[RMDB]
RNA sequence: GGGAACGACUCGAGUAGAGUCGAAAAGUGACAUGGUGCCGAAGACAAUAGCUGGCAAGAUUUUUGGUUCAAUAUGCUCCUUGAGUGGAGUCUUAGUGAUUGCUCUGCCAGUUCCUGUAAUUGUCUCUGUCCAUAUAAUAUUCGUAUUAUAUGGACAAAAAGAAACAACAACAACAAC
Reactivity to 2A3 in 0.01 (KOAc 150mM, MgCl2 10mM, bicine 150mM(pH8.5), 24C), signal-to-noise 9, nucleotides 027 to 126: g090u070g040a050c050a100u120g040g030u100g060c040c040g050a070a010g020a010c020a020a050u040a050g010c010u010g010g020c030a060a070g020a060u100u170u130u180u250g140g020u070u020c010a030a030u040a030u130g010c000u020c010c000u180u140g100a130g300u150g210g000a010g010u010c040u020u060a040g000u030g040a030u010u120g020c010u020c030u030g000c000c000a000g010u040u040c010c010u150g040u110a070a070u030u030g020u010c010u000c010
Reactivity to DMS in 0.01 (KOAc 150mM, MgCl2 10mM, bicine 150mM(pH8.5), 24C), signal-to-noise 9, nucleotides 027 to 126: g010u010g000a060c080a060u010g010g010u010g010c050c060g010a110a050g000a030c030a030a040u010a090g010c010u000g000g010c010a040a050g010a080u010u010u010u020u020g010g010u010u000c040a040a070u010a040u000g000c000u000c000c000u000u010g010a200g010u010g000g000a020g010u010c080u000u000a040g010u010g000a040u010u010g010c110u000c060u000g000c010c010a020g010u000u010c100c070u010g010u020a090a090u000u000g000u000c010u000c130